[RMDB]
RNA sequence: GGGAACGACUCGAGUAGAGUCGAAAAAUAGAGCGCAAGAGUCUAGCUAGUAAGUAGGAUUCUCAUAAGGAAUCAUUUCCACUAUGAAUCUAGUCACUAAAUAAACACAAUUAGCUACUGUGUGUAAUAAGUUCUCUGAUUUCGAUCAGAGAACUUAAAAAGAAACAACAACAACAAC
Reactivity to DMS in 0.01 (KOAc 150mM, MgCl2 10mM, bicine 150mM(pH8.5), 24C), signal-to-noise 6, nucleotides 027 to 126: a080u020a080g000a060g020c050g010c130a050a060g000a060g000u010c050u000a080g020c000u000a040g010u000a080a230g000u000a030g010g010a020u020u000c010u010c030a120u080a200a300g000g000a010a000u010c020a130u020u020u040c070c070a300c030u020a020u000g010a120a100u020c020u000a010g010u020c090a060c150u030a060a060a070u040a050a090a050c040a020c030a030a020u010u010a090g000c070u010a100c080u000g020u000g000u010g010u010a070a120
Reactivity to 2A3 in 0.01 (KOAc 150mM, MgCl2 10mM, bicine 150mM(pH8.5), 24C), signal-to-noise 7, nucleotides 027 to 126: a000u180a010g080a020g030c110g000c070a100a040g040a020g100u030c030u050a020g000c010u000a020g010u040a110a030g010u010a030g100g030a010u030u010c070u010c040a090u070a170a060g040g000a010a010u020c030a060u090u090u040c030c010a030c030u020a020u070g040a030a020u040c010u020a010g050u070c020a010c070u120a070a030a150u180a050a120a000c010a000c010a060a070u080u040a040g020c020u050a030c020u040g010u000g010u010g020u060a040a080
Structure probing data (DMS and 2A3) for a 177-nucleotide construct. 2A3 adducts were read by reverse transcription with SuperScript II with manganese.